[RMDB]
RNA sequence: GGGAACGACUCGAGUAGAGUCGAAAAGCAGAGAGACAGAGACAGGAGGCACGUGUGGGCAGCUAGUAGAUUUCCUGCCUUAUCGGGGCAGCACUGGGAAGAGGCAUGGGGAAGCAAGAUUCCUUGGGUGCCUGCAGCGAUGGAGGCUGGACUCUGCUACAAGGCAGAUAUUCGUAUCUGCCUUGUAAAAAGAAACAACAACAACAAC
Reactivity to 2A3 in 0.01 (KOAc 150mM, MgCl2 10mM, bicine 150mM(pH8.5), 24C), signal-to-noise 2, nucleotides 027 to 156: g020c040a010g020a020g010a000g030a060c020a030g060a010g020a030c000a020g000g020a030g030g020c030a030c110g070u130g020u060g020g020g000c030a030g040c020u050a030g020u020a010g000a080u130u100u070c000c010u040g000c010c010u010u030a040u020c030g180g030g030g000c000a000g000c000a020c020u040g030g000g000a020a030g020a060g080g030c040a080u180g020g000g020g050a030a020g020c010a050a060g010a150u020u040c010c000u090u130g160g030g010u020g030c030c030u010g000c000a010g100c000g010a010u040g090g020a010g000g000c000u000g010g000a000c000u000c010u010g020c000
Reactivity to DMS in 0.01 (KOAc 150mM, MgCl2 10mM, bicine 150mM(pH8.5), 24C), signal-to-noise 2, nucleotides 027 to 156: g010c030a040g000a080g000a140g010a100c080a100g000a140g030a070c080a070g010g010a080g000g000c060a070c100g010u000g020u000g030g000g000c040a140g000c060u000a070g020u000a040g010a150u000u010u000c040c010u010g010c000c010u000u000a060u000c050g020g030g010g000c000a120g030c040a050c010u000g000g010g000a090a100g000a180g040g000c030a060u000g010g000g000g000a070a040g020c030a090a150g000a300u000u010c010c000u020u000g030g010g040u000g000c070c000u000g050c020a070g010c000g000a080u010g020g000a040g010g040c020u000g000g010a040c300u010c020u000g020c040
Annotation: Structure probing data (2A3 and DMS) for a 207-nucleotide construct. The reactions ran in a buffer of 150 mM KOAc, 10 mM MgCl2 and 150 mM bicine (pH 8.5), at 24 C. The data come from the RNA Mapping Database (RMDB), library OK3TST. DMS adducts were read by reverse transcription with MarathonRT.